[RMDB]
RNA sequence: GGGAACGACUCGAGUAGAGUCGAAAAGAUAUGGAUGCACGCGGUCAACAGCUUACGAUCGGAAACGAUCGUUAAGACAUGACCCAUGCAUCCUAAGUCAAAACUUAACCUCUUCGGAGGUUAAGAAGAUCUAAAGGUAGUUCGCUACCUUUAGAUCAAAAGAAACAACAACAACAAC
Reactivity to DMS in 0.01 (KOAc 150mM, MgCl2 10mM, bicine 150mM(pH8.5), 24C), signal-to-noise 7, nucleotides 027 to 126: g000a010u010a010u010g000g010a010u000g010c010a000c030g000c300g020g000u000c000a130a100c240a110g010c000u000u000a010c010g010a010u000c000g010g010a000a010a020c000g020a010u000c000g000u000u010a000a010g020a020c080a300u010g010a000c000c000c000a030u000g000c000a010u000c000c000u000a000a040g000u010c000a150a090a140a200c010u000u000a000a010c000c000u000c000u000u010c250g030g010a020g000g000u000u000a000a010g010a090a110
Reactivity to 2A3 in 0.01 (KOAc 150mM, MgCl2 10mM, bicine 150mM(pH8.5), 24C), signal-to-noise 9, nucleotides 027 to 126: g000a000u010a000u040g010g000a000u010g020c010a010c070g090c300g030g020u030c090a300a170c070a300g000c000u000u010a000c000g000a000u000c000g000g000a000a000a010c000g000a000u000c000g020u060u210a000a000g010a010c100a300u300g000a000c000c000c000a000u010g000c000a000u000c000c000u000a000a000g000u000c010a040a030a040a100c000u010u000a000a000c000c000u000c020u070u050c290g200g000a000g000g000u000u000a000a000g000a000a030